[RMDB]
RNA sequence: GGGAACGACUCGAGUAGAGUCGAAAACGAUGGCAUUCUCUGGAUAGACCACUUGCUCGUCAUCACCAAGAAUAAGGGUGAGCACGCGUCUAGCGACAUCCUUUACAUCGGCAGCACGGGCGGCCAAAGCAUCUUCACGUUUCGACGUGAAGAUGCUAAAAGAAACAACAACAACAAC
Reactivity to DMS in 0.01 (KOAc 150mM, MgCl2 10mM, bicine 150mM(pH8.5), 24C), signal-to-noise 1, nucleotides 027 to 126: c090g010a000u000g050g000c030a150u000u030c020u000c120u000g040g020a200u000a130g000a050c020c030a080c110u040u000g030c020u000c000g050u000c090a140u020c210a160c090c020a050a060g010a130a140u000a000a020g000g010g030u000g000a160g050c150a070c000g000c020g000u000c210u050a090g020c080g000a130c050a030u000c000c000u030u020u000a050c120a150u010c000g020g000c020a000g020c280a010c000g000g000g010c020g000g000c050c020a020a080
Reactivity to 2A3 in 0.01 (KOAc 150mM, MgCl2 10mM, bicine 150mM(pH8.5), 24C), signal-to-noise 2, nucleotides 027 to 126: c070g060a070u050g000g000c010a070u110u000c050u020c050u060g030g050a080u010a130g070a040c000c000a010c050u030u090g000c000u000c040g060u010c020a040u070c000a040c030c010a060a030g140a090a050u190a060a010g030g010g000u030g040a050g000c080a070c050g070c020g040u100c120u150a020g000c000g050a100c010a000u000c000c000u030u000u040a050c020a080u050c040g000g000c010a020g010c010a000c050g030g040g000c060g000g090c000c060a080a130